Description:
Structure probing data (DMS and 2A3) for a 177-nucleotide construct.
RNA sequence: GGGAACGACUCGAGUAGAGUCGAAAACUGCCCUGGGUUUUCGCUGUCUUACAGAUAGACUGUGCCUAAUUAGUUCGUCUCUUAAUCGGAUGGAAGUUGUGAAAUUUGUAAGGGCGGAUAAUUAACGCGAUAAGUUAUCUUUCGAGAUAAUUUAUCGAAAAGAAACAACAACAACAAC
Reactivity to DMS in 0.01 (KOAc 150mM, MgCl2 10mM, bicine 150mM(pH8.5), 24C), signal-to-noise 9, nucleotides 027 to 126: c100u020g010c010c010c010u000g000g010g010u000u000u000u000c040g010c010u000g010u020c050u010u010a080c060a030g010a030u000a030g000a030c010u000g000u010g000c020c010u000a040a050u030u010a070g020u020u000c030g010u010c010u030c030u000u010a070a090u040c080g000g010a040u010g000g000a100a080g020u010u010g000u010g000a110a100a070u010u010u000g010u000a050a030g000g000g010c000g000g000a020u010a020a040u010u020a080a110c220g000
Reactivity to 2A3 in 0.01 (KOAc 150mM, MgCl2 10mM, bicine 150mM(pH8.5), 24C), signal-to-noise 8, nucleotides 027 to 126: c040u080g010c000c000c000u020g030g000g000u010u020u010u040c010g000c010u010g050u070c010u020u050a030c020a020g030a030u020a010g010a010c010u010g000u020g020c000c010u030a040a040u030u050a030g080u020u020c020g020u000c050u000c000u140u080a110a100u110c030g040g000a030u030g040g040a060a060g010u110u110g060u030g070a060a050a070u050u040u030g050u060a010a010g000g000g000c000g000g000a010u030a040a040u060u050a090a060c070g000

For 2A3 the reverse transcriptase was SuperScript II with manganese. 2A3 is a SHAPE reagent: it acylates the 2'-hydroxyl of flexible nucleotides of all four kinds. Source: RMDB library OK1LIB, as collected in RNAgym. Conditions: 150 mM KOAc, 10 mM MgCl2 and 150 mM bicine (pH 8.5), 24 C.